[RMDB]
RNA sequence: GGGAACGACUCGAGUAGAGUCGAAAAGCAAAUAAGAUAUAGGGGAAGAAGAUGACAACCUUCUCGCGGUCUUCCCUGUUACGUGUGUAGACACAAUGAAUGUCAUCAAAACUAAAUAUACAAAAAACCCUAUAUAGGAGUUCGCUCCUAUAUAGGGAAAAGAAACAACAACAACAAC
Reactivity to DMS in 0.01 (KOAc 150mM, MgCl2 10mM, bicine 150mM(pH8.5), 24C), signal-to-noise 1, nucleotides 027 to 126: g010c100a100a060a110u010a160a080g010a050u030a120u020a100g020g000g020g020a030a000g070a300a220g000a010u000g000a050c020a020a050c010c040u000u000c000u000c010g040c200g000g020u000c010u000u010c000c000c000u010g000u000u010a050c190g000u010g040u000g000u030a070g010a010c040a000c020a070a020u000g000a060a010u010g010u000c010a020u020c030a080a130a120a050c190u000a050a070a060u010a130u010a040c000a000a030a180a090a050a110
Reactivity to 2A3 in 0.01 (KOAc 150mM, MgCl2 10mM, bicine 150mM(pH8.5), 24C), signal-to-noise 2, nucleotides 027 to 126: g000c030a060a100a080u280a300a170g080a070u160a040u180a300g030g000g010g000a000a000g030a040a050g000a040u010g000a010c010a010a010c000c000u030u070c020u010c000g020c040g030g000u000c030u010u000c000c000c010u000g020u000u070a080c110g030u030g000u000g040u120a040g110a240c020a000c000a010a040u100g090a040a000u030g010u000c010a000u000c030a100a040a000a000c020u020a000a040a130u180a080u070a090c070a020a170a000a050a050a060